[RMDB]
RNA sequence: GGGAACGACUCGAGUAGAGUCGAAAACCCCCAAGUUUCGACUUGGGGGAAUUAAAAUCAGCGGUAAAUAAUUAGCUCCCGUUACCGCUGAACGCGAGCAUAGAGCAAUGCGCUUCGGCGCAUUGAACGGUAUUAUCAGAUUCGUCUGAUAAUACCGAAAAGAAACAACAACAACAAC
Reactivity to DMS in 0.01 (KOAc 150mM, MgCl2 10mM, bicine 150mM(pH8.5), 24C), signal-to-noise 6, nucleotides 027 to 126: c000c000c000c010c000a010a000g000u000u000u010c150g000a020c000u000u000g000g010g010g010g000a000a010u000u000a070a070a090a110u000c010a000g010c000g010g000u000a010a050a090u000a070a110u020u010a140g000c130u000c010c040c020g000u000u000a010c010c000g010c000u000g000a020a040c160g010c090g000a070g020c090a100u010a090g010a130g000c000a010a000u000g000c000g010c010u000u010c200g020g010c000g000c010a000u000u000g010a040a120
Reactivity to 2A3 in 0.01 (KOAc 150mM, MgCl2 10mM, bicine 150mM(pH8.5), 24C), signal-to-noise 7, nucleotides 027 to 126: c000c000c000c000c000a010a000g000u020u040u150c160g110a010c000u000u000g000g000g000g000g040a010a010u190u160a060a060a030a170u030c010a000g000c000g040g010u030a050a070a080u140a090a250u260u180a070g030c040u020c020c010c000g000u010u010a010c000c000g000c000u000g000a020a000c060g060c090g060a080g050c050a150u110a180g100a020g090c000a010a000u010g000c000g000c010u010u040c220g070g000c000g000c000a000u000u000g010a030a010
The data come from the RNA Mapping Database (RMDB), library M2PK50. The record gives the reactivity of an RNA of 177 nucleotides to DMS and 2A3. DMS adducts were read by reverse transcription with MarathonRT. The DMS profile rests on 8,784 reads.